The data come from the RNA Mapping Database (RMDB), library 15KLIB. An RNA of 170 nucleotides, treated with 2A3 and DMS and read out base by base. The 2A3 profile rests on 8,267 reads. 2A3 adducts were read by reverse transcription with SuperScript II with manganese. For DMS, 7,432 sequencing reads were counted.
[RMDB]
RNA sequence: GGGAACGACUCGAGUAGAGUCGAAAAACGUUGAUAUGGAUUUACUCCGAGGAGACGAACUACCACGAACAGGGGAUACUCUACCCGUGGCGUCUCCGUUUGACGAGUAAGUCCAAAGUCAACAUGCGAACCCUUUGCUUCGGCAAAGGGAAAAGAAACAACAACAACAAC
Reactivity to 2A3 in 0.01 (KOAc 150mM, MgCl2 10mM, bicine 150mM(pH8.5), 24C), signal-to-noise 4, nucleotides 027 to 129: a000c020g000u000u000g000a000u000a020u040g010g000a010u000u000u000a000c010u010c010c000g050a080g030g000a010g020a000c000g040a090a040c100u160a070c150c020a000c000g030a120a040c050a170g040g000g000g070a050u160a260c040u060c010u010a090c050c040c000g020u000g000g010c010g000u000c010u000c000c000g010u010u030u090g030a010c010g000a000g010u000a000a000g000u000c000c000a000a000a000g020u000c010a010a000c000a000u090g010c000g090a050a060
Reactivity to DMS in 0.01 (KOAc 150mM, MgCl2 10mM, bicine 150mM(pH8.5), 24C), signal-to-noise 1, nucleotides 027 to 129: a130c000g030u030u000g000a060u000a120u000g010g020a060u060u000u000a000c010u010c010c030g000a070g040g000a000g030a020c010g020a100a070c090u070a300c120c010a000c020g030a050a300c230a000g040g000g000g050a200u140a000c020u040c000u030a170c280c090c040g030u060g000g000c000g010u030c010u020c010c020g020u010u000u000g060a130c300g000a000g010u030a000a000g020u000c010c010a000a040a070g020u020c000a020a000c000a080u050g020c000g060a050a070